An RNA of 207 nucleotides, treated with DMS and 2A3 and read out base by base.
[RMDB]
RNA sequence: GGGAACGACUCGAGUAGAGUCGAAAAAAGGGCAAGUGAAAACCAUAGCCUGAUGCCACCCACAUAAAUGAAAAACUCACAAUGCUGAGAGUUGGUGAGGGCGGGAUAGGAACUUUCACACAUUGCUGGUGGCAGUGCAAGAUGGUAUGGCCAUGUGAUAGUUUACGGUAUUCGUACCGUAAACUAUAAAAGAAACAACAACAACAAC
Reactivity to DMS in 0.01 (KOAc 150mM, MgCl2 10mM, bicine 150mM(pH8.5), 24C), signal-to-noise 2, nucleotides 027 to 156: a060a150g010g000g040c030a120a190g010u040g010a130a060a130a080c060c020a080u010a140g040c000c010u000g010a140u000g010c000c010a020c000c000c060a120c070a120u000a040a110a100u010g010a060a070a040a070a180c030u000c030a020c020a110a100u010g030c100u000g000a100g010a140g020u000u010g000g030u000g010a080g000g000g050c070g000g030g000a150u020a090g000g020a080a060c110u000u010u010c040a060c000a100c060a160u010u010g000c000u000g030g030u020g010g000c020a050g030u000g010c030a060a150g000a070u000g000g020u000a060u000g000g020c010c050a090u000g010u000g000
Reactivity to 2A3 in 0.01 (KOAc 150mM, MgCl2 10mM, bicine 150mM(pH8.5), 24C), signal-to-noise 3, nucleotides 027 to 156: a030a000g090g000g010c080a110a100g050u060g110a080a040a040a030c010c020a020u030a060g070c020c020u030g020a030u070g000c020c010a020c010c160c000a050c010a060u300a100a180a070u140g100a090a050a050a030a010c010u020c000a040c010a110a280u220g030c090u040g090a020g000a020g050u100u060g030g000u150g050a190g000g010g070c130g000g000g020a040u140a080g050g000a030a040c010u040u090u030c040a040c000a000c010a060u040u120g010c060u030g000g000u010g020g000c020a010g020u050g080c050a090a000g050a060u070g030g000u050a040u070g060g000c000c030a030u110g030u030g050

Record summary: It was measured as part of the RMDB library OK3TST. For 2A3 the reverse transcriptase was SuperScript II with manganese. For DMS, 4,271 sequencing reads were counted.